The record gives the reactivity of an RNA of 177 nucleotides to 2A3 and DMS.
The reactions ran in a buffer of 150 mM KOAc, 10 mM MgCl2 and 150 mM bicine (pH 8.5), at 24 C.
The DMS profile rests on 11,669 reads.
The 2A3 profile rests on 35,991 reads.

RNA sequence: GGGAACGACUCGAGUAGAGUCGAAAAGAUAUGGAAGUGACUUAGCAACAGCUACCACUCGGAAACGAGUGUGUAGACAUGCUGUGUCACUUCCUAAGUCAAACCACCGCAGUUCGCUGCGGUGGAAGCUAAAUUCUAAGUUCGCUUAGAAUUUAGCAAAAGAAACAACAACAACAAC
Reactivity to 2A3 in 0.01 (KOAc 150mM, MgCl2 10mM, bicine 150mM(pH8.5), 24C), signal-to-noise 6, nucleotides 027 to 126: g010a000u040a020u070g000g000a010a000g000u010g000a010c020u080u110a010g010c060a060a180c070a230g000c010u000a000c000c000a000c000u000c000g010g030a030a030a020c010g000a000g010u030g040u090g010u000a000g010a010c010a200u300g000c000u000g010u000g000u010c000a000c000u000u000c000c000u000a000a000g000u000c020a050a030a110c010c000a000c000c010g000c000a010g020u110u190c260g070c200u010g000c000g010g000u010g000g000a010a000
Reactivity to DMS in 0.01 (KOAc 150mM, MgCl2 10mM, bicine 150mM(pH8.5), 24C), signal-to-noise 6, nucleotides 027 to 126: g000a030u000a240u010g010g010a040a010g020u010g010a020c000u000u000a010g030c000a090a060c300a150g000c000u000a000c010c000a010c000u000c000g010g000a070a080a110c000g010a010g010u000g000u010g020u000a000g010a030c100a300u010g010c000u010g010u000g000u000c000a010c010u000u000c000c000u000a000a040g000u000c030a120a130a250c010c000a020c000c000g010c010a010g010u000u010c280g030c000u000g010c010g000g010u000g010g000a010a020